[RMDB]
RNA sequence: GGGAACGACUCGAGUAGAGUCGAAAAAGAUAUGUGGAGUACGGAUCUUUCUCAAUGCCUACUUUAGGAAUUCUAAAAAGUUGGAAAGCUUUACCAGAGAGGGUGAUAGUCCCCUGGAAGUAACUAAUUAUAAAAGGGAUUUCGAUCCCUUUUAUAAAAAAGAAACAACAACAACAAC
Reactivity to DMS in 0.01 (KOAc 150mM, MgCl2 10mM, bicine 150mM(pH8.5), 24C), signal-to-noise 5, nucleotides 027 to 126: a060g010a070u010a020u030g030u000g010g000a100g040u040a030c100g020g010a050u000c020u000u010u000c020u010c010a060a090u030g000c040c010u000a020c050u000u010u010a030g010g010a140a110u000u010c030u000a050a060a060a060a070g010u000u010g000g010a160a060a120g000c020u000u010u020a050c040c040a120g010a250g020a130g030g000g000u000g000a100u040a120g010u000c010c010c010c020u000g000g010a050a050g010u010a050a140c060u000a030a180
Reactivity to 2A3 in 0.01 (KOAc 150mM, MgCl2 10mM, bicine 150mM(pH8.5), 24C), signal-to-noise 2, nucleotides 027 to 126: a000g030a030u090a080u080g060u070g070g090a170g110u150a030c020g040g000a010u010c000u000u040u010c020u030c000a060a070u120g000c000c010u060a050c040u100u010u000a010g000g060a010a010u050u040c020u200a200a110a000a010a070g040u010u010g020g050a140a010a000g000c010u060u090u060a100c000c010a020g090a020g040a150g050g010g000u090g040a100u130a120g050u070c000c000c020c000u020g010g080a020a000g000u020a030a020c010u010a020a170
An RNA of 177 nucleotides, treated with DMS and 2A3 and read out base by base. The 2A3 profile rests on 1,046 reads. The RNA was probed in 150 mM KOAc, 10 mM MgCl2 and 150 mM bicine (pH 8.5) at 24 C. High 2A3 reactivity points to a flexible backbone, as in loops and unpaired stretches. It was measured as part of the RMDB libraries RFM100 and RFMREP.